[RMDB]
RNA sequence: GGGAACGACUCGAGUAGAGUCGAAAAAUCUUGGCGAAGUCAGCGCGGAAGGAGCGCGCAACUCCUUACCCUCGCCUUUUUUUUUCCGCUCCCGUUCGCGAAAGCGUUCAGCGGAAAAGGCACCAAACACUACUAUGCGGUUCGCCGCAUAGUAGUGAAAAGAAACAACAACAACAAC
Reactivity to 2A3 in 0.01 (KOAc 150mM, MgCl2 10mM, bicine 150mM(pH8.5), 24C), signal-to-noise 1, nucleotides 027 to 126: a000u040c040u030u050g030g000c040g020a050a000g130u170c050a040g100c050g000c080g010g010a070a000g010g010a010g040c080g000c050g000c100a070a190c020u010c020c000u050u090a280c020c020c010u020c020g000c000c030u010u020u000u000u000u010u000u010u000c040c000g000c010u030c010c060c020g000u010u000c020g000c000g070a140a050a020g000c010g000u000u030c010a000g040c000g010g010a000a010a000a030g030g040c050a050c030c030a060a050a010
Reactivity to DMS in 0.01 (KOAc 150mM, MgCl2 10mM, bicine 150mM(pH8.5), 24C), signal-to-noise 2, nucleotides 027 to 126: a030u000c080u000u000g000g020c000g010a080a090g020u000c130a110g010c100g010c210g010g030a070a030g000g000a020g010c030g010c220g010c210a110a170c010u010c010c010u010u000a180c070c000c030u000c010g030c010c000u000u000u000u000u000u000u000u000u000c010c010g010c000u000c110c060c050g000u000u000c000g020c010g000a110a060a150g000c010g020u000u000c010a040g000c000g010g000a000a010a000a030g010g010c050a100c070c040a070a050a200